[RMDB]
RNA sequence: GGGAACGACUCGAGUAGAGUCGAAAAGGGGCGUUUCGACGCCCCCCUUGGGGGUCGUGGAGUUGACAUGGAGGACCUGAAGCCUCCACGGGUUGACCUCCAACAGCAACUCGUAACAUCGACGGAGGCACCCGAAGUCACCUUCUUCGGAAGGUAACGGUCCUAUAUAAUUCGUUAUAUAGGACCGAAAAGAAACAACAACAACAAC
Reactivity to DMS in 0.01 (KOAc 150mM, MgCl2 10mM, bicine 150mM(pH8.5), 24C), signal-to-noise 3, nucleotides 027 to 156: g010g030g220g040c000g030u000u000u020c150g010a040c020g010c000c000c010c010c000c000u000u000g010g020g030g020g020u000c040g040u010g030g010a140g010u000u000g000a080c080a170u000g010g010a020g030g010a170c030c070u030g000a120a250g000c020c010u000c000c030a170c020g000g010g030u010u000g020a190c030c020u000c000c020a050a090c100a110g030c030a030a070c040u000c030g000u000a120a120c080a100u000c080g010a120c110g010g020a080g030g030c030a070c050c010c020g020a070a210g020u000c050a050c030c000u000u000c010u000u000c270g050g000a050a030g000g000u000a030a200
Reactivity to 2A3 in 0.01 (KOAc 150mM, MgCl2 10mM, bicine 150mM(pH8.5), 24C), signal-to-noise 2, nucleotides 027 to 156: g000g000g000g000c030g010u080u170u210c200g060a000c010g000c000c000c000c000c000c000u040u060g010g010g000g000g000u010c000g020u060g020g040a080g000u050u040g040a080c040a160u120g020g000a000g000g020a020c020c120u100g090a130a020g020c010c000u010c010c010a020c010g000g000g020u040u200g160a300c000c010u000c010c000a040a050c030a010g040c030a040a080c020u040c060g090u170a150a110c040a210u230c090g010a020c030g020g010a000g010g000c000a010c010c010c010g040a040a020g000u050c060a030c000c000u000u000c000u030u060c130g140g000a020a010g010g000u060a060a010
Source information
Source: RMDB library RNAMAK, as collected in RNAgym. The record gives the reactivity of an RNA of 207 nucleotides to DMS and 2A3. For DMS, 5,300 sequencing reads were counted. The reactions ran in a buffer of 150 mM KOAc, 10 mM MgCl2 and 150 mM bicine (pH 8.5), at 24 C. DMS adducts were read by reverse transcription with MarathonRT. 2A3 is a SHAPE reagent: it acylates the 2'-hydroxyl of flexible nucleotides of all four kinds. For 2A3 the reverse transcriptase was SuperScript II with manganese.